[RMDB]
RNA sequence: GGGAACGACUCGAGUAGAGUCGAAAAGAUAUGGAUGACGCUACCCACCCUGGGUUCCCUUCCCGAAGAACUAACUCGGAAACGAGUUAGGGAGGGAAGGGAACCACAGGAGGCGUCAUCCUAAGUCCUGAACAACUUACUUCGGUAAGUUGUUCAGAAAAGAAACAACAACAACAAC
Reactivity to DMS in 0.01 (KOAc 150mM, MgCl2 10mM, bicine 150mM(pH8.5), 24C), signal-to-noise 2, nucleotides 027 to 126: g030a110u000a110u020g000g020a000u000g020a000c000g000c000u010a150c040c050c080a300c110c020c000u000g010g000g000u000u010c000c000c000u000u000c000c000c000g010a140a180g000a160a110c000u000a010a010c000u000c000g010g010a160a110a210c010g000a040g000u000u000a010g000g040g020a060g010g000g020a020a010g000g010g000a000a000c000c000a030c030a000g000g000a120g010g010c010g010u010c000a000u000c000c000u010a020a080g010u000c070
Reactivity to 2A3 in 0.01 (KOAc 150mM, MgCl2 10mM, bicine 150mM(pH8.5), 24C), signal-to-noise 1, nucleotides 027 to 126: g140a140u300a200u300g020g000a000u010g000a000c020g020c000u120a300c050c000c020a040c000c020c000u000g010g000g030u010u000c030c000c020u000u000c100c010c020g190a300a030g000a040a000c000u000a000a000c010u030c000g000g050a070a110a050c010g000a010g030u000u000a010g000g000g000a010g050g010g000a000a000g000g000g000a000a000c000c000a000c000a000g000g000a000g000g010c000g010u000c000a000u010c010c010u010a000a010g010u050c010